[RMDB]
RNA sequence: GGGAACGACUCGAGUAGAGUCGAAAAUGCUGAGCCUGAGAGUGUUAUUCCUGUCAUAAAAGAGAAAACGGCGAAGAAAGAAAUUGAUUUGCAGUACAUUCUGACCACUCAUCAUCACUAUGAUCAUGCAGGCGGCAACGAAGACAUUUUGAGCUAAGCGUAUUACUAGGUUCGCCUAGUAAUACGCAAAAGAAACAACAACAACAAC
Reactivity to 2A3 in 0.01 (KOAc 150mM, MgCl2 10mM, bicine 150mM(pH8.5), 24C), signal-to-noise 1, nucleotides 027 to 156: u070g000c030u020g040a010g030c020c000u030g030a080g000a000g060u030g070u090u080a110u090u050c000c050u020g050u010c030a040u100a220a050a110a010g080a070g040a020a160a020a000c010g030g000c070g010a010a000g050a050a060a020g060a060a090a010u080u100g030a010u060u040u040g000c000a000g030u040a050c010a060u050u000c020u020g010a020c030c000a010c020u020c000a010u040c000a010u050c020a020c100u170a080u120g000a020u050c030a010u130g030c000a000g010g000c070g000g010c010a010a030c070g030a030a070g050a020c050a120u150u180u160u280g080a070g030c070u060a000a130
Reactivity to DMS in 0.01 (KOAc 150mM, MgCl2 10mM, bicine 150mM(pH8.5), 24C), signal-to-noise 1, nucleotides 027 to 156: u020g010c050u000g040a160g000c030c000u030g060a130g000a060g050u000g030u000u000a170u000u000c000c050u000g040u060c060a090u020a020a110a200a180g020a140g010a050a100a140a020c070g110g020c020g030a020a060g010a200a020a090g000a100a040a150u000u010g010a300u010u000u020g020c010a090g010u000a130c060a110u000u000c010u010g000a090c000c060a020c000u000c050a020u000c050a070u000c100a130c130u000a080u000g020a020u000c060a120u000g010c060a010g050g020c040g000g030c000a020a080c080g000a060a060g000a090c020a110u020u000u000u010g000a140g020c000u000a080a290

Structure probing data (2A3 and DMS) for a 207-nucleotide construct. Reactivities are rounded to 0.1 and cut off at 0 and 3. Conditions: 150 mM KOAc, 10 mM MgCl2 and 150 mM bicine (pH 8.5), 24 C. The DMS profile rests on 1,799 reads.